[RMDB]
RNA sequence: GGGAACGACUCGAGUAGAGUCGAAAAACUUCGAGCGUCGAAUCAAGGGAAGCGUGCCGGUGCAGGCAAGAGACCACCGUAAGCGUCGUUGCAACCAAUUAAGCGCCGAUUCCAAUCAGCGCGACUACGCACUCGCUGCCUAAGCGACUGCGUGUCUGAAAGGAACAGACUUCGGUCUGUUCCUUUCAAAAGAAACAACAACAACAAC
Reactivity to 2A3 in 0.01 (KOAc 150mM, MgCl2 10mM, bicine 150mM(pH8.5), 24C), signal-to-noise 2, nucleotides 027 to 156: a000c040u080u060c030g010a030g020c020g020u040c030g070a080a090u050c050a050a020g060g000g000a040a030g000c020g030u040g050c090c020g040g010u020g040c030a050g010g000c030a020a010g000a000g000a040c000c000a000c040c000g180u200a020a000g000c010g020u010c010g000u010u010g000c010a000a050c010c020a060a050u230u190a130a080g000c000g000c020c000g020a020u220u110c070c050a130a110u000c000a020g000c040g000c000g030a000c010u180a020c000g000c000a000c010u010c000g000c010u030g100c010c170u120a110a000g010c000g000a010c020u010g000c010g000u010g020u000c040u000
The data come from the RNA Mapping Database (RMDB), library RSTRND.
Structure probing data (2A3) for a 207-nucleotide construct.
For 2A3 the reverse transcriptase was SuperScript II with manganese.
The reactions ran in a buffer of 150 mM KOAc, 10 mM MgCl2 and 150 mM bicine (pH 8.5), at 24 C.